An RNA of 170 nucleotides, treated with 2A3 and DMS and read out base by base. The RNA was probed in 150 mM KOAc, 10 mM MgCl2 and 150 mM bicine (pH 8.5) at 24 C. For DMS the reverse transcriptase was MarathonRT. For DMS, 22,577 sequencing reads were counted.

[RMDB]
RNA sequence: GGGAACGACUCGAGUAGAGUCGAAAACGAGGGGGUUCACACCUCCAGGCGGCGGGCCGGCUACUCUUCUUUUCCUUUUCUCGUCUUCCUCGGUCAGCCUCCUGAGUUCCUCUUCUUCCUCCCUGCUCGCGGGGUAUCUUCGGAUACCCCAAAAGAAACAACAACAACAAC
Reactivity to 2A3 in 0.01 (KOAc 150mM, MgCl2 10mM, bicine 150mM(pH8.5), 24C), signal-to-noise 7, nucleotides 027 to 129: c100g000a040g000g010g000g010g010u140u110c060a040c010a030c130c030u030c050c000a010g010g000c000g000g010c010g010g010g000c000c000g040g020c040u110a090c040u030c050u090u090c040u050u070u040u100c020c030u080u040u050u040c060u010c020g100u000c030u060u030c010c010u010c000g010g000u000c010a010g010c000c000u020c000c000u010g010a030g010u020u030c010c000u010c000u020u000c000u020u030c030c010u010c020c000c000u050g040c010u050c030g030c050
Reactivity to DMS in 0.01 (KOAc 150mM, MgCl2 10mM, bicine 150mM(pH8.5), 24C), signal-to-noise 3, nucleotides 027 to 129: c210g000a110g000g000g000g000g000u000u000c180a150c200a030c060c010u000c100c030a020g010g050c120g000g000c000g000g010g000c040c050g060g000c090u040a000c080u000c070u030u020c060u020u010u020u020c000c000u040u030u020u010c060u000c030g050u030c010u000u000c050c000u030c060g030g060u010c030a030g030c050c010u030c020c030u020g010a140g000u000u000c000c010u000c050u000u000c050u000u000c060c020u030c000c010c030u040g030c050u020c060g000c300